RNA sequence: GGGAACGACUCGAGUAGAGUCGAAAAGAUAUGGAAGGUUAUCACACUACCCACCUCAAUUUCGGAAACGAAAUGUGAGAGGUGUGAAUUCCUUCCUAAGUCAAAGGUACACGUUCGCGUGUACCAACCAAUACAGGUUCUUCGGAACCUGUAUUGGAAAAGAAACAACAACAACAAC
Reactivity to DMS in 0.01 (KOAc 150mM, MgCl2 10mM, bicine 150mM(pH8.5), 24C), signal-to-noise 4, nucleotides 027 to 126: g010a070u000a300u020g010g010a020a000g010g000u000u000a180u010c030a000c010a010c040u000a100c060c060c130a300c070c030u000c010a100a010u010u000u000c000g000g000a060a140a270c010g010a000a010a000u000g010u000g000a030g000a130g020g010u000g010u000g000a010a300u000u000c000c000u000u000c010c000u000a030a120g010u010c070a120a110a120g000g000u000a000c000a000c000g000u000u020c300g000c020g050u000g000u000a000c000c010a040a050
Reactivity to 2A3 in 0.01 (KOAc 150mM, MgCl2 10mM, bicine 150mM(pH8.5), 24C), signal-to-noise 5, nucleotides 027 to 126: g020a050u080a050u170g010g010a000a000g060g050u180u090a240u280c010a000c000a010c040u180a140c060c100c050a090c050c000u000c010a010a020u010u000u010c010g010g060a060a060a050c010g040a030a010a000u300g110u070g110a020g000a020g040g000u000g000u000g000a040a200u100u070c010c000u000u010c010c000u030a160a030g050u010c070a130a100a080g000g000u010a010c000a000c010g010u070u110c300g000c010g130u010g010u000a000c000c000a000a000
Chemical mapping of a 177-nucleotide RNA with DMS and 2A3.
The reactions ran in a buffer of 150 mM KOAc, 10 mM MgCl2 and 150 mM bicine (pH 8.5), at 24 C.